The data come from the RNA Mapping Database (RMDB), library OK2TST. An RNA of 177 nucleotides, treated with 2A3 and DMS and read out base by base. For DMS, 14,253 sequencing reads were counted.
[RMDB]
RNA sequence: GGGAACGACUCGAGUAGAGUCGAAAAUUCACUAUCGUAUGCUGCUAUUGCAGCAGGACCGCGUCGCAUGACUUUUUGGCUUUCCUGUUCAGUUUGUAAGUCAUGAAUCACAAUAGCCAGGCGUCUAGCCUAUUUACUACUUCGGUAGUAAAUAGGCAAAAGAAACAACAACAACAAC
Reactivity to 2A3 in 0.01 (KOAc 150mM, MgCl2 10mM, bicine 150mM(pH8.5), 24C), signal-to-noise 6, nucleotides 027 to 126: u070u020c040a040c140u140a110u230c050g100u100a060u110g000c010u010g000c010u100a140u300u300g000c020a000g000c000a000g010g030a010c040c030g030c020g040u030c020g000c040a020u040g020a050c000u050u050u020u080u100g040g000c020u040u050u060c010c020u040g090u110u110c020a060g030u030u140u180g140u140a040a020g010u020c010a030u050g030a040a050u100c050a030c010a070a090u020a040g030c000c030a020g060g020c010g060u030c060u010a020
Reactivity to DMS in 0.01 (KOAc 150mM, MgCl2 10mM, bicine 150mM(pH8.5), 24C), signal-to-noise 8, nucleotides 027 to 126: u010u010c040a080c090u010a070u010c100g010u000a090u010g010c010u000g020c010u010a130u010u010g010c030a020g000c010a030g010g000a080c100c100g010c080g010u000c090g000c040a040u000g000a030c040u000u000u010u000u010g000g000c030u000u000u000c050c050u010g000u000u010c090a070g010u000u010u000g000u000a040a040g020u000c030a040u000g000a070a070u000c110a060c110a070a080u010a050g010c030c050a070g000g010c080g010u000c090u000a140

The RNA was probed in 150 mM KOAc, 10 mM MgCl2 and 150 mM bicine (pH 8.5) at 24 C.
For DMS the reverse transcriptase was MarathonRT.
For 2A3, 6,785 sequencing reads were counted.
For 2A3 the reverse transcriptase was SuperScript II with manganese.